[RMDB]
RNA sequence: GGGAACGACUCGAGUAGAGUCGAAAAAACUACGGCGGCAUGGUGCCACCAGGUCCAGGUGGCUACGUGGGUCCGCCCCCUAAUCCGUGGGCCAGCAAUGUGCCGCCACAGCCGCCCUUCAACCAGAGACGGGGUCAGUAUUCGUACUGACCCCGUCAAAAGAAACAACAACAACAAC
Reactivity to 2A3 in 0.01 (KOAc 150mM, MgCl2 10mM, bicine 150mM(pH8.5), 24C), signal-to-noise 1, nucleotides 027 to 126: a020a000c140u210a050c060g040g000c000g000g000c040a040u000g030g010u120g010c060c000a000c000c050a090g040g050u140c040c000a050g000g090u040g070g050c000u080a000c000g130u260g010g010g000u040c000c020g060c020c010c020c020c020u020a050a120u120c000c000g040u110g000g000g000c010c010a030g020c020a040a180u280g000u000g000c020c000g000c000c000a010c000a040g040c010c000g000c000c010c000u030u030c010a010a040c010c040a010g000a000
Notes: Conditions: 150 mM KOAc, 10 mM MgCl2 and 150 mM bicine (pH 8.5), 24 C. The record gives the reactivity of an RNA of 177 nucleotides to 2A3. For 2A3, 471 sequencing reads were counted. 2A3 adducts were read by reverse transcription with SuperScript II with manganese.